[RMDB]
RNA sequence: GGGAACGACUCGAGUAGAGUCGAAAACUUGCCGUAGACAACCAAGCACGUGUCUGACACGGACCAACGGUAGCAAGUCUUGCUCCAACAUUUGGUCGCGGUGCGAUGACCAACCACUGGGUUGACAAAUAGUCUCGCUGUUCGCAGCGAGACUAUUAAAAGAAACAACAACAACAAC
Reactivity to 2A3 in 0.01 (KOAc 150mM, MgCl2 10mM, bicine 150mM(pH8.5), 24C), signal-to-noise 1, nucleotides 027 to 126: c010u000u070g040c030c020g180u110a020g010a040c000a020a040c000c020a000a000g040c070a020c090g190u100g000u090c090u070g020a050c010a000c020g040g000a000c030c020a020a020c080g020g130u190a010g000c050a050a080g190u000c130u050u120g000c020u000c000c030a060a180c070a300u130u100u060g110g000u120c290g090c130g300g030u020g000c070g000a010u030g020a000c000c020a000a040c010c020a040c030u090g110g000g060u000u000g000a000c020a000
Reactivity to DMS in 0.01 (KOAc 150mM, MgCl2 10mM, bicine 150mM(pH8.5), 24C), signal-to-noise 1, nucleotides 027 to 126: c120u000u020g000c140c040g000u010a110g000a250c080a000a050c040c010a120a030g050c070a050c210g000u020g020u000c010u000g000a120c010a000c020g000g010a020c010c010a020a050c300g000g000u010a000g010c000a050a130g000u020c140u000u010g010c010u000c010c030a130a070c100a170u000u000u000g000g000u000c010g000c030g010g000u020g010c130g010a080u010g000a060c010c010a080a030c070c140a080c020u020g010g000g010u010u000g000a080c060a080
Chemical mapping of a 177-nucleotide RNA with 2A3 and DMS. Values cover nucleotides 27 to 126. The RNA was probed in 150 mM KOAc, 10 mM MgCl2 and 150 mM bicine (pH 8.5) at 24 C. DMS adducts were read by reverse transcription with MarathonRT.